[RMDB]
RNA sequence: GGGAACGACUCGAGUAGAGUCGAAAACUCGUCCUGGCACAUUUCCUAUCCUGGAAUAUUAGUGCAGACGCAUUGCACUGUUUGGCCCAUCCGUACGCCGCUUCUCCCCUCUCCUCACGGUUGGGGGUUAGUACGAUUGAUUCGUCAAUCGUACUAAAAAAGAAACAACAACAACAAC
Reactivity to 2A3 in 0.01 (KOAc 150mM, MgCl2 10mM, bicine 150mM(pH8.5), 24C), signal-to-noise 9, nucleotides 027 to 126: c030u020c020g020u030c010c020u030g080g010c020a030c010a080u030u030u040c010c010u050a130u100c020c050u070g020g050a060a030u120a090u190u170a040g000u010g010c000a010g040a060c070g020c090a080u040u110g020c010a010c050u040g060u150u070u100g080g000c000c000c010a030u030c010c010g020u040a030c040g010c020c010g030c020u080u030c020u060c010c000c000c000u010c000u010c000c000u080c020a050c060g030g000u030u030g010g000g000g000g000
Reactivity to DMS in 0.01 (KOAc 150mM, MgCl2 10mM, bicine 150mM(pH8.5), 24C), signal-to-noise 9, nucleotides 027 to 126: c040u010c020g010u000c020c050u000g000g020c040a040c070a080u000u000u000c010c010u000a120u020c140c090u000g000g010a070a050u020a080u020u010a050g020u000g010c000a050g010a110c120g000c160a080u010u000g010c040a040c030u000g010u010u000u010g010g010c030c010c030a070u010c030c040g010u010a070c100g010c030c030g000c070u010u010c030u000c010c010c010c020u000c040u000c010c010u000c150a110c190g000g010u010u010g000g000g000g010g010

This 177-nucleotide RNA was probed chemically with 2A3 and DMS. The data come from the RNA Mapping Database (RMDB), libraries RFM100 and RFMREP. Conditions: 150 mM KOAc, 10 mM MgCl2 and 150 mM bicine (pH 8.5), 24 C.